The record gives the reactivity of an RNA of 177 nucleotides to DMS and 2A3. For DMS the reverse transcriptase was MarathonRT. Reactivities are given for positions 27 through 126.

[RMDB]
RNA sequence: GGGAACGACUCGAGUAGAGUCGAAAACUACUGAUGAAGGUCGCCGCAACGGUAAUUCAAUUUAGUACGAGAGGAACCGUUGAUUCAGAUAAUUGGUUUUUGCGGCUGUCUGACCAGGCAGUGCCGCGCACGAGUCCAAGUUCGCUUGGACUCGUGCAAAAGAAACAACAACAACAAC
Reactivity to DMS in 0.01 (KOAc 150mM, MgCl2 10mM, bicine 150mM(pH8.5), 24C), signal-to-noise 2, nucleotides 027 to 126: c050u030a070c050u000g000a050u000g030a170a110g000g000u000c080g020c090c130g020c000a010a010c020g020g030u000a030a180u070u000c000a100a080u010u000u010a070g040u010a090c230g020a240g000a040g020g000a300a010c010c010g030u000u010g000a090u040u000c020a020g000a160u000a080a100u080u040g030g000u000u000u000u000u010g000c020g000g000c000u000g000u000c000u000g000a110c250c080a190g010g030c010a030g010u010g020c000c000g010c010
Reactivity to 2A3 in 0.01 (KOAc 150mM, MgCl2 10mM, bicine 150mM(pH8.5), 24C), signal-to-noise 3, nucleotides 027 to 126: c000u030a010c000u030g040a030u080g100a180a030g060g000u050c030g050c110c020g000c070a070a040c030g000g010u130a050a030u000u010c010a000a030u080u140u300a190g060u170a070c070g060a020g000a020g140g060a130a070c000c000g000u000u000g000a050u040u020c000a000g050a090u070a130a150u130u120g070g070u070u040u070u170u090g030c000g000g070c050u000g000u000c010u030g050a040c050c010a000g020g000c000a000g020u090g150c010c000g000c000